[RMDB]
RNA sequence: GGGAACGACUCGAGUAGAGUCGAAAAUGGAGGUAAUAUGAACAUCCACAGACAAGAUCCACUCUCCUACGCCGGAUGGCUCGCUUCUUGACUUGUCUGUGAGUGACUUUGAUUGGAACCUGAGUAGGCUGAGCAUGGAAUUCGUUCCAUGCUCAGCAAAAGAAACAACAACAACAAC
Reactivity to 2A3 in 0.01 (KOAc 150mM, MgCl2 10mM, bicine 150mM(pH8.5), 24C), signal-to-noise 2, nucleotides 027 to 126: u210g050g000a060g020g040u090a040a050u070a220u210g130a130a000c000a000u030c000c000a000c000a010g000a020c000a020a000g000a070u080c090c000a120c050u050c020u060c030c000u120a170c050g030c020c070g170g020a060u150g100g000c010u050c050g030c000u120u070c030u150u100g070a040c000u010u020g000u010c000u000g000u000g000a020g010u020g040a090c020u110u090u050g030a070u000u090g070g040a060a000c030c060u040g020a020g090u160a050g070